[RMDB]
RNA sequence: GGGAACGACUCGAGUAGAGUCGAAAAGUUACUUAAAUUGCUGGGGGGCUCCCAACACCUGGACUUUUGGCACCACGAGGUCAACACCCUGAUUACAAAAGCCUUAGUUGACCCAAAGACUGGCUCACUUCGUUCUUUAAUUCGUUAAAGAACGAAGAAAAGAAACAACAACAACAAC
Reactivity to DMS in 0.01 (KOAc 150mM, MgCl2 10mM, bicine 150mM(pH8.5), 24C), signal-to-noise 4, nucleotides 027 to 126: g000u010u020a090c050u020u000a030a090a100u030u010g000c050u000g010g000g020g010g010g020c030u010c000c010c010a060a090c060a060c060c030u010g010g000a110c100u000u000u000u030g000g020c040a070c040c030a070c090g000a090g030g000u000c030a020a080c080a070c050c030c010u010g000a100u010u010a090c130a070a070a060a080g000c010c020u000u030a090g010u010u010g000a080c020c020c050a060a060a100g000a060c070u010g000g000c030u020c140a180
Reactivity to 2A3 in 0.01 (KOAc 150mM, MgCl2 10mM, bicine 150mM(pH8.5), 24C), signal-to-noise 7, nucleotides 027 to 126: g030u030u060a060c020u080u100a040a120a200u160u100g020c050u050g000g000g000g000g040g000c010u030c010c000c000a020a030c010a010c010c010u030g040g030a050c020u030u030u070u080g040g000c010a010c040c000a030c070g040a060g020g040u030c010a020a020c010a070c020c020c000u060g050a110u050u150a070c060a060a100a020a010g020c010c010u060u070a030g010u020u040g040a060c000c000c000a030a050a000g050a030c060u040g010g020c000u000c020a050